[RMDB]
Background
Conditions: 150 mM KOAc, 10 mM MgCl2 and 150 mM bicine (pH 8.5), 24 C. Structure probing data (DMS and 2A3) for a 177-nucleotide construct. For 2A3, 28,727 sequencing reads were counted. 2A3 adducts were read by reverse transcription with SuperScript II with manganese. It was measured as part of the RMDB library TTRDES. The DMS profile rests on 10,592 reads.
RNA sequence: GGGAACGACUCGAGUAGAGUCGAAAAGAUAUGGAUACGGAUGGUCGAUAAGUCCCUAUCGGAAACGAUAGAAGGACUUUUGACGACCUACCCGUAUCCUAAGUCAAAACCAGAGUUCGCUCUGGAACCAAGCUAUAUAGUUCGCUAUAUAGCUUGGAAAAGAAACAACAACAACAAC
Reactivity to DMS in 0.01 (KOAc 150mM, MgCl2 10mM, bicine 150mM(pH8.5), 24C), signal-to-noise 7, nucleotides 027 to 126: g000a040u000a300u010g000g010a010u000a010c000g020g000a050u000g000g010u000c000g030a170u010a020a020g000u000c000c000c010u000a010u000c010g000g000a160a110a210c000g010a010u000a000g000a170a120g020g000a010c000u000u000u000u010g020a260c110g000a020c000c010u000a090c170c000c000g010u000a010u000c000c000u000a010a090g000u010c040a080a070a130a170c000c010a010g000a020g020u000u020c280g020c020u010c000u000g000g000a090a190
Reactivity to 2A3 in 0.01 (KOAc 150mM, MgCl2 10mM, bicine 150mM(pH8.5), 24C), signal-to-noise 7, nucleotides 027 to 126: g030a010u080a020u160g010g000a000u000a010c000g010g010a010u020g000g010u010c010g030a080u020a130a010g010u000c010c000c000u010a000u000c000g030g020a100a060a040c020g000a000u010a010g130a180a170g020g000a000c000u030u020u010u080g140a050c020g010a000c000c010u010a050c000c000c000g000u000a000u000c000c000u000a010a010g010u000c030a000a020a130a220c010c000a000g000a000g010u140u240c300g030c100u000c010u010g010g000a010a030